Description
The record gives the reactivity of an RNA of 207 nucleotides to 2A3.

RNA sequence: GGGAACGACUCGAGUAGAGUCGAAAAAAGUAUUGCGAUAGUUAAGGUUGCGCUUGCCUAUUUAGGCAUACUUCUCAGGAUGGCGCGUUGCAGUCCAACAAGAUCCAGGGACUGUACAGAAUUUUCCAAAACGCGUCGAGGUUCGCCUCGACGCGAACUUGUGUGUAAUCUUCGGAUUACACACAAGAAAAGAAACAACAACAACAAC
Reactivity to 2A3 in 0.01 (KOAc 150mM, MgCl2 10mM, bicine 150mM(pH8.5), 24C), signal-to-noise 1, nucleotides 027 to 156: a000a000g130u060a020u090u130g000c000g050a080u080a050g090u170u150a160a040g030g050u150u030g010c070g000c050u040u090g010c010c000u100a170u070u190u160a040g010g010c040a010u020a030c000u030u060c030u050c050a030g060g020a110u070g030g020c010g000c010g080u010u030g000c000a000g000u000c020c000a040a070c050a260a060g020a180u000c060c010a100g000g050g000a020c010u000g000u000a010c010a010g140a110a080u000u030u090u110c030c020a020a000a060a090c000g010c000g000u010c000g000a000g000g010u090u130c240g070c040c000u010c010g000a000c060g000c000g000a000a000
The RNA was probed in 150 mM KOAc, 10 mM MgCl2 and 150 mM bicine (pH 8.5) at 24 C. For 2A3, 541 sequencing reads were counted.